[RMDB]
RNA sequence: GGGAACGACUCGAGUAGAGUCGAAAAGAGGAAGAUGUGAUGCGCUUCGACCAUGGCGGACGGACCUUCGCCAUUUAUCGCAGUCCGGACGAUGACUACUUCGCGACCGAUGGUCUCUGCACACACGCAGCAUAUACGCUUUCGAGCGUAUAUGCUGAAAAGAAACAACAACAACAAC
Reactivity to DMS in 0.01 (KOAc 150mM, MgCl2 10mM, bicine 150mM(pH8.5), 24C), signal-to-noise 5, nucleotides 027 to 126: g000a070g010g010a060a060g010a130u020g020u000g020a100u010g010c040g010c120u030u010c180g010a020c030c020a070u000g010g000c000g010g020a050c100g000g000a110c200c050u010u020c040g000c020c090a050u020u020u040a040u030c130g000c170a160g000u000c030c020g010g000a040c080g030a120u030g000a110c140u050a100c140u010u010c040g010c090g000a120c020c010g000a050u000g010g000u000c010u000c160u020g000c020a010c030a040c030a040c110g020
Reactivity to 2A3 in 0.01 (KOAc 150mM, MgCl2 10mM, bicine 150mM(pH8.5), 24C), signal-to-noise 9, nucleotides 027 to 126: g140a010g080g050a050a070g050a160u090g030u030g050a200u030g020c030g010c050u090u160c080g010a020c000c020a020u020g020g030c010g020g000a020c040g040g040a020c000c030u040u060c060g020c020c000a040u110u180u100a160u090c060g000c050a020g010u010c010c010g020g030a040c030g060a080u130g030a040c040u080a070c040u160u090c060g010c040g080a060c000c030g060a030u040g020g000u000c020u000c030u070g000c010a000c000a010c000a000c060g020